[RMDB]
An RNA of 207 nucleotides, treated with 2A3 and read out base by base.
Values cover nucleotides 27 to 156.
It was measured as part of the RMDB library OK3TST.

RNA sequence: GGGAACGACUCGAGUAGAGUCGAAAAAGGGACACCUCACUCACAUUUUACCAACUGAGUGAGAGUGAGGUUAACCUCUCAUUUCAGUUGGUGAACGCAGAAGUUAGAGGUUGAGAACACUGACAACUGCGUUCAUAGUUGUGAGUGUUCUGUCCCACGCUCCGAUAGUAUUCGUACUAUCGGAGCGAAAAGAAACAACAACAACAAC
Reactivity to 2A3 in 0.01 (KOAc 150mM, MgCl2 10mM, bicine 150mM(pH8.5), 24C), signal-to-noise 2, nucleotides 027 to 156: a000g000g000g000a000c000a010c000c040u020c000a000c000u040c010a030c000a060u030u150u150u140a010c000c000a000a000c000u000g000a000g000u000g020a000g030a000g020u100g000a060g020g230u100u120a040a060c060c000u000c000u000c000a050u270u300u050c000a010g000u000u000g000g050u000g010a000a000c000g010c030a010g000a040a020g010u000u000a030g030a080g120g050u060u060g060a080g010a050a030c020a000c040u010g010a000c000a050a010c020u010g000c020g040u020u010c030a040u070a050g150u050u050g000u000g000a010g000u000g000u000u000c000u000g000u010c000c000c020a000